[RMDB]
RNA sequence: GGGAACGACUCGAGUAGAGUCGAAAACACACACCAACUUAUGAGUCUCACAUAGCUUUCAUAGACAUAUAUUUGACUUCUAUCCUUACCCAUAUUAUUUUCUGAAAAACCUGACUUGGGACUAAUUUGGAACAUUCAUGAUUAUUUGUCAAGGAGACACCGGUAUGGAGUUCGCUCCAUACCGGUGAAAAGAAACAACAACAACAAC
Reactivity to 2A3 in 0.01 (KOAc 150mM, MgCl2 10mM, bicine 150mM(pH8.5), 24C), signal-to-noise 1, nucleotides 027 to 156: c070a010c010a010c000a030c020c020a090a120c070u110u160a040u200g020a060g000u000c030u030c000a110c020a090u040a040g040c020u060u110u080c070a130u130a060g060a030c040a030u070a090u000a110u210u030u070g040a040c020u040u000c020u060a120u030c010c010u020u020a050c000c000c030a010u000a050u090u110a070u050u080u000u030c040u040g050a120a070a000a100a070c030c030u050g070a080c050u090u020g080g010g010a070c040u050a020a040u090u030u190g040g010a080a000c010a100u070u160c020a040u140g060a090u040u120a030u090u140u100g090u070c020a010a030g070g000a070g030a030
The record gives the reactivity of an RNA of 207 nucleotides to 2A3.
For 2A3, 417 sequencing reads were counted.
The data come from the RNA Mapping Database (RMDB), library OK3TST.